[RMDB]
RNA sequence: GGGAACGACUCGAGUAGAGUCGAAAAUAAAAAUUGACCGUGAAUCUGAUGCAGCCACACAUCAAACCUCCAAAAUUUACAUGCUAAGAAGUAUCUUGAUGAGCAUGGAAUUUAGAGCCCCAGAUGACAUAUACCAUGGUUUCGACCAUGGUAUAUGAAAAGAAACAACAACAACAAC
Reactivity to 2A3 in 0.01 (KOAc 150mM, MgCl2 10mM, bicine 150mM(pH8.5), 24C), signal-to-noise 7, nucleotides 027 to 126: u100a000a080a020a000a020u100u100g040a030c010c040g020u060g060a040a070u090c090u080g030a040u060g050c020a020g000c030c010a020c000a000c000a030u050c030a070a060a040c010c010u010c020c020a010a110a020a010u030u040u030a160c030a000u020g020c000u050a050a040g020a100a030g160u140a180u190c060u080u110g080a140u090g020a050g000c000a000u000g010g010a000a010u020u020u030a060g010a010g050c010c000c000c010a020g040a090u090g040a040
Reactivity to DMS in 0.01 (KOAc 150mM, MgCl2 10mM, bicine 150mM(pH8.5), 24C), signal-to-noise 5, nucleotides 027 to 126: u050a040a040a060a060a090u020u030g010a090c060c030g010u030g000a080a070u010c080u010g020a060u020g010c010a060g010c020c020a040c060a090c030a040u000c040a060a090a100c100c020u010c020c030a070a020a020a020u000u000u000a110c010a010u010g000c000u000a040a050g000a110a090g020u050a050u030c080u020u010g010a140u040g000a030g020c000a010u000g000g000a000a010u010u000u010a110g000a060g010c030c010c000c030a070g000a070u010g010a190